[RMDB]
RNA sequence: GGGAACGACUCGAGUAGAGUCGAAAAAUAGAAAGGCUAAGCACCUCGCAAUGAGGUAAGGUGGGACUUUUCCUUCAGGAACCAAGCGGUUGGUUCCGAGGGGGGUGUGAUCCAGGUACCGCCGUAGGUAUGGAAUUAGCUUCGGCUAAUUCCAUACAAAAGAAACAACAACAACAAC
Reactivity to DMS in 0.01 (KOAc 150mM, MgCl2 10mM, bicine 150mM(pH8.5), 24C), signal-to-noise 2, nucleotides 027 to 126: a060u030a080g000a040a060a100g000g020c010u010a100a130g020c150a020c000c000u000c000g000c180a150a090u030g000a000g000g010u010a040a040g040g020u000g000g000g010a060c050u010u000u000u000c030c050u010u010c020a140g000g010a000a000c000c000a020a070g030c250g000g000u000u000g000g010u000u000c010c000g000a020g000g010g000g020g010g010u010g000u020g000a070u000c030c040a080g010g020u000a080c080c030g010c030c070g040u000a080g010
Reactivity to 2A3 in 0.01 (KOAc 150mM, MgCl2 10mM, bicine 150mM(pH8.5), 24C), signal-to-noise 1, nucleotides 027 to 126: a000u160a020g130a050a090a030g090g000c060u080a020a000g080c010a020c020c000u000c010g040c190a160a300u290g000a010g020g040u080a020a010g000g040u040g010g050g010a020c010u070u090u030u070c020c000u030u060c130a130g000g030a000a020c020c010a000a010g030c070g300g080u060u010g000g000u000u020c000c000g010a090g000g010g000g010g000g020u060g060u070g060a040u010c010c030a010g040g040u030a010c010c000g060c020c020g010u040a060g000
Source: RMDB library VIROID, as collected in RNAgym.
The record gives the reactivity of an RNA of 177 nucleotides to DMS and 2A3.
For 2A3, 1,003 sequencing reads were counted.
For 2A3 the reverse transcriptase was SuperScript II with manganese.
For DMS, 1,251 sequencing reads were counted.